The record gives the reactivity of an RNA of 177 nucleotides to DMS and 2A3.
The RNA was probed in 150 mM KOAc, 10 mM MgCl2 and 150 mM bicine (pH 8.5) at 24 C.
For 2A3, 4,708 sequencing reads were counted.
DMS adducts were read by reverse transcription with MarathonRT.
It was measured as part of the RMDB library OK1LIB.

RNA sequence: GGGAACGACUCGAGUAGAGUCGAAAAGUUGGUUCUGACUCGGAAAAGAUAAAAGUUUCGGUGGGUCAGCGUGUCAUGCACGAUAAAUAUGCCGGAAACCCAGUAAAGAUUGAUGGAGAGGAGCACCAUUAAAUACCGAUUUCGAUCGGUAUUUAAUAAAAGAAACAACAACAACAAC
Reactivity to DMS in 0.01 (KOAc 150mM, MgCl2 10mM, bicine 150mM(pH8.5), 24C), signal-to-noise 8, nucleotides 027 to 126: g010u010u010g000g010u010u000c010u000g010a060c030u000c020g010g010a050a070a070a050g010a120u040a090a110a120a120g010u000u010u000c030g020g020u010g010g010g010u010c050a040g000c050g020u000g010u000c120a090u040g000c020a030c020g000a090u030a050a050a080u030a060u020g010c040c010g000g010a080a070a100c020c020c010a080g000u020a060a070a090g000a090u020u010g000a100u010g000g010a060g010a140g000g010a070g000c110a070c080c070
Reactivity to 2A3 in 0.01 (KOAc 150mM, MgCl2 10mM, bicine 150mM(pH8.5), 24C), signal-to-noise 5, nucleotides 027 to 126: g030u040u040g010g040u050u010c010u040g040a050c020u020c020g090g030a100a090a030a020g120a040u240a120a180a030a090g040u010u030u040c050g030g050u110g060g000g000u010c030a010g020c020g000u010g010u040c070a040u190g080c020a000c000g000a000u050a030a060a000u130a030u120g020c010c010g030g010a030a050a080c020c010c010a030g010u110a020a140a020g020a060u100u240g050a050u090g010g010a040g000a010g020g070a010g040c020a030c060c000